[RMDB]
Chemical mapping of a 177-nucleotide RNA with DMS. For DMS the reverse transcriptase was MarathonRT. The RNA was probed in 150 mM KOAc, 10 mM MgCl2 and 150 mM bicine (pH 8.5) at 24 C. For DMS, 1,053 sequencing reads were counted. Reactivities are rounded to 0.1 and cut off at 0 and 3. In probing experiments dimethyl sulfate is read out at A N1 and C N3, which are open when not base-paired.

RNA sequence: GGGAACGACUCGAGUAGAGUCGAAAAUGCCUGCACCCACUUUUCGAGGAUGUCUUCCCUUCCUCCCCUCCGGGAUUUCUUCUGAUCGGACUGGCUCAUCCUCGGAAACGGGGGCGGCGGCGUCCGUUACAGUUGUUAACUUCGGUUAACAACUGUAAAAAGAAACAACAACAACAAC
Reactivity to DMS in 0.01 (KOAc 150mM, MgCl2 10mM, bicine 150mM(pH8.5), 24C), signal-to-noise 1, nucleotides 027 to 126: u020g010c020c000u000g050c030a080c000c000c010a150c130u010u000u000u010c030g010a060g010g000a020u010g010u040c070u000u000c050c020c020u000u000c010c070u020c050c010c010c000u000c080c060g020g040g000a160u000u000u000c120u010u000c080u020g000a090u000c090g000g000a080c270u000g010g000c100u000c030a020u000c000c000u000c000g000g010a000a010a030c170g030g000g000g000g010c050g020g020c040g000g010c100g010u000c000c000g000u000